[RMDB]
Record summary: The record gives the reactivity of an RNA of 177 nucleotides to 2A3 and DMS. DMS (dimethyl sulfate) methylates the pairing face of unpaired adenines and cytosines. Values cover nucleotides 27 to 126. Conditions: 150 mM KOAc, 10 mM MgCl2 and 150 mM bicine (pH 8.5), 24 C. Source: RMDB library OK2TRN, as collected in RNAgym.
RNA sequence: GGGAACGACUCGAGUAGAGUCGAAAAAUAGCUCAGGUUGUACUUCUAAUACAUAUAAAGGGCAAGGUUACUAUCUUUGUAUUGCAGGAGGUAAUUCUAACAUAAUCAGGGCUGUGUCUGACACAGACACUGCCGGGUAUUUCGAUACCCGGCAGUGAAAAGAAACAACAACAACAAC
Reactivity to 2A3 in 0.01 (KOAc 150mM, MgCl2 10mM, bicine 150mM(pH8.5), 24C), signal-to-noise 2, nucleotides 027 to 126: a010u100a000g020c010u010c030a000g030g080u040u040g070u030a070c030u030u010c010u060a080a100u080a230c070a040u180a000u050a170a040a040g050g040g000c120a090a030g110g000u190u130a100c020u040a070u170c010u090u130u020g040u070a140u100u080g030c000a010g000g000a000g010g010u040a060a040u050u120c100u160a080a100c010a100u220a070a050u060c060a020g020g060g000c000u000g000u030g010u000c080u060g100a020c070a000c010a150g090a100
Reactivity to DMS in 0.01 (KOAc 150mM, MgCl2 10mM, bicine 150mM(pH8.5), 24C), signal-to-noise 3, nucleotides 027 to 126: a070u000a030g010c030u000c020a040g010g000u000u000g000u010a070c010u000u000c030u000a070a120u000a140c050a040u010a040u000a050a040a050g020g000g000c130a060a090g010g020u000u010a070c060u010a090u010c030u000u000u000g010u000a020u000u000g020c140a070g020g000a020g010g020u000a030a060u010u000c070u000a040a120c230a080u000a030a040u000c060a040g020g010g000c010u010g010u000g000u000c050u000g020a140c080a060c160a070g020a100